[RMDB]
RNA sequence: GGGAACGACUCGAGUAGAGUCGAAAAUGAAAUAAAGCGCACCAAGAUGGAGGUGCGCAACCAGCGUGUCCAUGGAUCACGCAUGCACGCGUCUACCAAGACGCGAAAGGUAUUACAAAUAAAAAAACACAUUACGUCAGUUCGCUGACGUAAUGUGAAAAGAAACAACAACAACAAC
Reactivity to DMS in 0.01 (KOAc 150mM, MgCl2 10mM, bicine 150mM(pH8.5), 24C), signal-to-noise 2, nucleotides 027 to 126: u020g010a040a050a020u010a070a120a090g000c000g000c000a000c000c000a090a170g010a200u000g020g030a170g020g010u000g000c000g050c000a000a000c070c030a150g000c000g060u000g010u000c090c090a130u000g030g010a030u000c040a000c000g000c020a030u010g000c160a120c010g030c000g000u000c000u000a090c300c300a130a050g000a020c000g000c010g000a000a070a070g010g000u000a060u030u010a040c100a060a050a070u050a000a040a030a020a020a100a080
Reactivity to 2A3 in 0.01 (KOAc 150mM, MgCl2 10mM, bicine 150mM(pH8.5), 24C), signal-to-noise 3, nucleotides 027 to 126: u060g020a000a020a080u170a080a070a000g000c000g000c010a000c000c000a030a040g180a130u210g120g070a070g030g000u010g000c000g000c000a000a010c010c000a010g010c000g010u010g000u000c070c060a170u220g090g000a060u200c020a010c010g030c000a000u080g050c030a030c070g000c000g000u000c000u050a160c030c030a040a010g000a010c010g000c020g000a070a040a000g070g000u080a070u150u110a080c100a020a030a020u240a050a090a010a000a000a020a010